[RMDB]
RNA sequence: GGGAACGACUCGAGUAGAGUCGAAAAGACGGAUUCUUCGGAAUCCGUCAAAGUGACGGUGAAUAAUGGCCAAUGCGCCAGCUACCACCGACACAGGGCGCAAAACUGGAGUGUUCGCACUCCAGAAGCCUAACAGGCUGUUCGCAGCCUGUUAGGCAAAAGAAACAACAACAACAAC
Reactivity to 2A3 in 0.01 (KOAc 150mM, MgCl2 10mM, bicine 150mM(pH8.5), 24C), signal-to-noise 1, nucleotides 027 to 126: g000a000c000g000g010a000u010u010c020u040u050c250g040g000a000a000u030c030c000g010u000c000a000a020a000g010u000g000a030c000g000g000u010g010a030a030u170a130a050u060g000g000c020c050a180a300u150g000c170g000c100c000a000g020c010u010a010c000c030a000c010c000g000a000c030a000c000a010g110g080g060c100g050c120a030a030a030a030c000u000g000g000a020g010u020g000u050u100c180g070c080a000c010u020c000c000a000g000a010a000
Reactivity to DMS in 0.01 (KOAc 150mM, MgCl2 10mM, bicine 150mM(pH8.5), 24C), signal-to-noise 2, nucleotides 027 to 126: g010a010c020g010g000a010u010u010c010u000u000c240g040g000a010a000u010c000c010g020u010c000a020a030a090g010u020g010a150c000g000g000u000g000a050a030u030a040a300u000g010g010c010c040a140a110u020g020c160g010c000c000a040g000c030u010a050c030c000a000c000c000g020a100c000a050c030a140g000g010g000c170g020c080a050a080a100a080c010u000g000g000a030g000u000g000u000u030c170g020c020a020c000u000c000c000a000g000a050a090
The data come from the RNA Mapping Database (RMDB), library M2PK50. An RNA of 177 nucleotides, treated with 2A3 and DMS and read out base by base. The reactions ran in a buffer of 150 mM KOAc, 10 mM MgCl2 and 150 mM bicine (pH 8.5), at 24 C. The DMS profile rests on 926 reads. DMS adducts were read by reverse transcription with MarathonRT.